[RMDB]
RNA sequence: GGGAACGACUCGAGUAGAGUCGAAAAUAUAAAAAGAAGCGCCCGAAGCCUGGAGGAUGGAACACUGGGGGCAGCCGAUACCCGGGGCAGGGCAGCCCUGGAGGCAACCGCUACCCAUAUAUACUUCGGUAUAUAAAAAGAAACAACAACAACAAC
Reactivity to DMS in 0.01 (KOAc 150mM, MgCl2 10mM, bicine 150mM(pH8.5), 24C), signal-to-noise 7, nucleotides 027 to 135: u020a110u030a050a070a070a090a100g000a110a130g010c140g000c020c000c020g000a040a060g010c040c020u000g010g010a040g000g000a060u010g000g010a060a050c090a070c120u010g010g000g010g010g010c040a060g010c010c020g000a110u020a080c120c000c000g000g000g000g000c010a070g000g020g000c110a100g010c000c010c000u000g000g010a070g000g000c030a080a050c120c080g000c020u000a060c010c000c010a070u000a000u010a020u000a010c000u000u030c120g010g000u000a010u000a010u000a020a060
Reactivity to 2A3 in 0.01 (KOAc 150mM, MgCl2 10mM, bicine 150mM(pH8.5), 24C), signal-to-noise 3, nucleotides 027 to 135: u110a010u030a010a090a020a010a010g090a070a020g060c010g030c020c000c000g020a030a010g030c000c020u030g010g020a020g030g010a040u060g010g060a040a030c030a020c050u010g000g000g000g000g000c000a000g000c010c010g010a030u050a080c000c000c010g010g010g000g000c010a020g030g070g050c020a010g000c000c010c000u010g010g010a020g020g020c010a020a030c050c020g020c010u040a120c000c000c010a000u000a000u000a000u000a000c010u000u030c110g030g000u000a010u000a000u010a020a100